An RNA of 207 nucleotides, treated with DMS and 2A3 and read out base by base. The reactions ran in a buffer of 150 mM KOAc, 10 mM MgCl2 and 150 mM bicine (pH 8.5), at 24 C. 2A3 adducts were read by reverse transcription with SuperScript II with manganese. The data come from the RNA Mapping Database (RMDB), library OK3TST.
RNA sequence: GGGAACGACUCGAGUAGAGUCGAAAAUAAGAGAGGUAAGUACGGAAUUCCUGUGUUGUGUUAGGAGACUCUGGCAAUAGGAUGAGCUUACCCAGUUAAACACAGGAAUUCAGCUGGAAGCAUUUGCCGUCCUAACACACGGGUACUUACCUGUACACACAAGCUACAACUUCGGUUGUAGCUUGUGAAAAGAAACAACAACAACAAC
Reactivity to DMS in 0.01 (KOAc 150mM, MgCl2 10mM, bicine 150mM(pH8.5), 24C), signal-to-noise 2, nucleotides 027 to 156: u000a070a080g020a220g010a080g000g020u000a020a030g000u000a060c010g020g010a080a120u000u000c020c000u010g010u000g070u000u000g000u000g010u000u000a030g010g000a090g000a110c070u010c120u010g030g020c020a050a070u010a070g030g000a170u000g000a180g000c010u000u010a070c110c010c000a060g000u000u000a030a010a080c040a210c050a290g000g010a140a050u010u000c010a020g030c030u000g000g020a110a070g020c030a260u000u000u000g010c000c000g000u000c010c000u000a040a030c020a030c020a000c000g030g000g010u000a000c020u000u000a010c000c000u040g010u000a000c040a130
Reactivity to 2A3 in 0.01 (KOAc 150mM, MgCl2 10mM, bicine 150mM(pH8.5), 24C), signal-to-noise 3, nucleotides 027 to 156: u300a080a030g090a010g000a020g030g000u010a010a000g000u020a020c060g070g090a090a080u040u040c000c000u000g010u020g080u250u010g010u010g010u010u010a010g000g030a080g030a110c110u090c160u240g000g000c020a030a020u050a110g160g080a150u200g080a060g010c000u010u040a090c000c000c000a000g020u010u090a050a110a020c090a010c030a060g140g000a060a070u080u070c010a000g000c010u010g020g010a000a000g020c040a090u020u010u060g000c000c000g010u010c010c000u030a050a000c000a000c010a000c000g060g000g000u000a000c000u000u000a000c000c000u020g020u060a030c070a000